[RMDB]
Structure probing data (2A3) for a 177-nucleotide construct. For 2A3 the reverse transcriptase was SuperScript II with manganese. Conditions: 150 mM KOAc, 10 mM MgCl2 and 150 mM bicine (pH 8.5), 24 C. The data come from the RNA Mapping Database (RMDB), library RFM100.
RNA sequence: GGGAACGACUCGAGUAGAGUCGAAAAUAUAUGACACAGCACUCCGCGACAGGACCAGGCUCGUCCUGUCUCAUCGUCGCACUAUGGUGCGACGACGCGAUUCCGUGUUGAAUGACGUUUGCCCUCGCUCAAGUCACACCUUCGGGUGUGACUUGAGAAAAGAAACAACAACAACAAC
Reactivity to 2A3 in 0.01 (KOAc 150mM, MgCl2 10mM, bicine 150mM(pH8.5), 24C), signal-to-noise 1, nucleotides 027 to 126: u100a000u090a060u110g000a000c000a010c010a020g010c020a000c020u000c050c080g020c070g000a000c000a000g010g010a000c070c040a160g190g000c030u060c160g000u080c000c000u040g010u030c020u020c010a000u050c000g000u000c000g020c000a000c000u070a070u300g280g000u000g000c050g000a000c000g000a000c010g000c000g060a060u060u000c100c020g050u100g010u010u000g070a100a110u040g010a090c160g010u000u040u090g030c050c000c000u000c000g010